[RMDB]
RNA sequence: GGGAACGACUCGAGUAGAGUCGAAAAGGGCUUCGUGGGGAGCGUCACUUUGGAGCAGCUGCUGCGCACUUGCCCUGACGUCCGCAAAGUCAUCCUGCUCGUCCGUAGCAAGAAGGGCCAGUCAGGACCCCUCUUCCUGUUUCGACAGGAAGAGGGGAAAAGAAACAACAACAACAAC
Reactivity to 2A3 in 0.01 (KOAc 150mM, MgCl2 10mM, bicine 150mM(pH8.5), 24C), signal-to-noise 2, nucleotides 027 to 126: g060g000g010c010u030u030c070g000u020g010g060g020g030a050g000c000g040u030c000a050c100u240u160u240g060g040a100g050c060a010g000c040u130g000c030u150g040c100g000c080a020c000u020u040g020c000c000c000u000g000a000c010g110u140c000c000g000c070a030a010a000g010u020c010a070u020c030c000u000g000c020u000c000g000u000c000c030g070u040a060g140c120a100a000g120a050a190g050g000g000c020c010a030g030u170c020a010g010g000a020
Reactivity to DMS in 0.01 (KOAc 150mM, MgCl2 10mM, bicine 150mM(pH8.5), 24C), signal-to-noise 2, nucleotides 027 to 126: g000g010g010c000u000u000c110g010u000g000g020g020g020a100g030c010g010u000c060a070c180u000u010u010g030g000a090g050c000a030g020c120u000g000c020u020g040c140g030c060a030c020u000u000g020c010c000c020u000g000a040c120g010u010c000c040g020c070a050a040a100g000u000c060a150u000c000c010u000g000c050u000c300g000u000c000c040g010u000a160g000c160a110a110g000a080a140g020g010g020c000c030a030g000u010c020a030g000g000a200

An RNA of 177 nucleotides, treated with 2A3 and DMS and read out base by base. The DMS profile rests on 1,481 reads. High 2A3 reactivity points to a flexible backbone, as in loops and unpaired stretches. For 2A3 the reverse transcriptase was SuperScript II with manganese.